This 177-nucleotide RNA was probed chemically with 2A3 and DMS. DMS adducts were read by reverse transcription with MarathonRT. Source: RMDB library OK1LIB, as collected in RNAgym. The 2A3 profile rests on 49,396 reads. Conditions: 150 mM KOAc, 10 mM MgCl2 and 150 mM bicine (pH 8.5), 24 C.
[RMDB]
RNA sequence: GGGAACGACUCGAGUAGAGUCGAAAACAAGGACGGUCGGCAACUCGUCGCGAGCCGGGCGAGGCAACUCGUCAAGGUCGACCAGCGAGGAGGGUGUGCGCAGGAUCUGUCCCUGCUCACUACGGCGCAGUUGUACAAGAUUCGUCUUGUACAACUGAAAAGAAACAACAACAACAAC
Reactivity to 2A3 in 0.01 (KOAc 150mM, MgCl2 10mM, bicine 150mM(pH8.5), 24C), signal-to-noise 9, nucleotides 027 to 126: c050a030a030g130g040a040c060g030g030u050c020g020g040c030a070a080c030u020c050g170u020c020g130c030g050a010g020c010c000g000g010g000c010g000a010g010g010c020a040a150c020u010c010g010u010c040a040a080g030g010u060c030g030a130c010c050a010g010c010g010a030g040g030a030g010g030g040u100g010u020g020c030g000c010a010g020g020a060u080c100u200g080u140c040c000c000u010g000c010u020c010a030c030u100a030c030g030g000c040g000
Reactivity to DMS in 0.01 (KOAc 150mM, MgCl2 10mM, bicine 150mM(pH8.5), 24C), signal-to-noise 9, nucleotides 027 to 126: c100a120a110g000g010a090c100g020g010u000c020g010g000c080a130a140c030u010c020g000u000c040g020c050g000a160g000c030c020g000g000g000c000g000a020g000g000c300a080a120c010u000c010g020u000c010a050a100g020g010u010c060g010a110c130c100a120g010c020g000a040g010g010a040g010g010g010u010g010u000g000c140g000c010a030g000g000a080u020c180u030g010u020c090c000c010u000g000c000u010c010a020c010u010a070c050g000g000c040g010